[RMDB]
Conditions: 150 mM KOAc, 10 mM MgCl2 and 150 mM bicine (pH 8.5), 24 C. Structure probing data (DMS and 2A3) for a 207-nucleotide construct. DMS adducts were read by reverse transcription with MarathonRT. For 2A3, 3,226 sequencing reads were counted. It was measured as part of the RMDB library M2RFPK.

RNA sequence: GGGAACGACUCGAGUAGAGUCGAAAAGAACACGUCUCGGGACGACGCUAAACUCGCCCUGGUCGGGAUGGGUUUAACGACCCAUCGGGUUUCCUAGUUCCUAAAACUAGGUGGUGGAGUCAUAUAAAAAACUUCUACACGUUCGCGUGUAGAAGAACCUGUAAUCCAAGUUCGCUUGGAUUACAGGAAAAGAAACAACAACAACAAC
Reactivity to DMS in 0.01 (KOAc 150mM, MgCl2 10mM, bicine 150mM(pH8.5), 24C), signal-to-noise 1, nucleotides 027 to 156: g010a090a120c040a140c020g010u000c020u000c030g000g000g000a060c020g030a050c010g000c030u010a110a080a160c130u000c000g000c000c000c020u000g010g020u010c040g040g000g010a040u000g010g040g000u000u000u000a080a200c170g000a090c010c020c000a000u010c000g000g000g020u000u000u000c020c010u000a020g010u000u020c000c050u000a070a020a010a040c000u000a010g000g000u000g000g000u010g000g000a210g010u000c040a100u000a140u040a000a070a030a060a090a130c000u000u010c000u000a000c000a010c000g020u000u000c300g080c040g050u010g040u000a010g030a020a000g000a020a040
Reactivity to 2A3 in 0.01 (KOAc 150mM, MgCl2 10mM, bicine 150mM(pH8.5), 24C), signal-to-noise 4, nucleotides 027 to 156: g030a080a030c080a010c110g000u000c000u020c010g030g030g000a130c300g010a020c040g060c230u000a010a000a010c000u000c000g050c040c000c020u050g000g050u100c110g060g070g030a000u000g000g020g020u030u020u080a090a020c030g010a010c000c000c000a000u000c010g010g000g000u000u010u000c000c000u000a000g000u010u050c020c060u120a030a030a010a010c000u000a040g000g020u010g020g010u060g000g050a080g030u060c060a060u090a000u210a190a070a010a010a030a050c000u000u000c000u000a000c000a000c010g030u040u040c180g010c000g060u000g000u000a000g000a000a000g000a000a000